[RMDB]
RNA sequence: GGGAACGACUCGAGUAGAGUCGAAAAACAAAACUGCGAAGGGGGGACGGAGAAGGCUAUGUUGGCCGGGCGACGGUUGUCCCGGUAUAAGCGUGUAGGCUGGUUUUCCAGGCAAAUAAAAAAAAAACCUAUCUCUAAGAUUCGUCUUAGAGAUAGGAAAAGAAACAACAACAACAAC
Reactivity to DMS in 0.01 (KOAc 150mM, MgCl2 10mM, bicine 150mM(pH8.5), 24C), signal-to-noise 1, nucleotides 027 to 126: a100c020a090a020a140a090c070u000g000c060g000a040a120g010g000g000g040g030g010a090c050g000g000a100g000a070a060g020g000c030u000a030u030g000u000u010g010g000c020c010g010g010g020c300g010a070c090g020g030u020u000g000u000c020c010c030g010g010u000a050u010a050a030g000c060g010u000g010u010a100g010g010c020u000g000g010u000u000u000u000c000c030a120g010g010c130a070a070a070u040a000a010a010a010a000a020a090a110a070a140

Conditions: 150 mM KOAc, 10 mM MgCl2 and 150 mM bicine (pH 8.5), 24 C.
An RNA of 177 nucleotides, treated with DMS and read out base by base.
It was measured as part of the RMDB library M2PK90.
Reactivities are given for positions 27 through 126.
The DMS profile rests on 1,064 reads.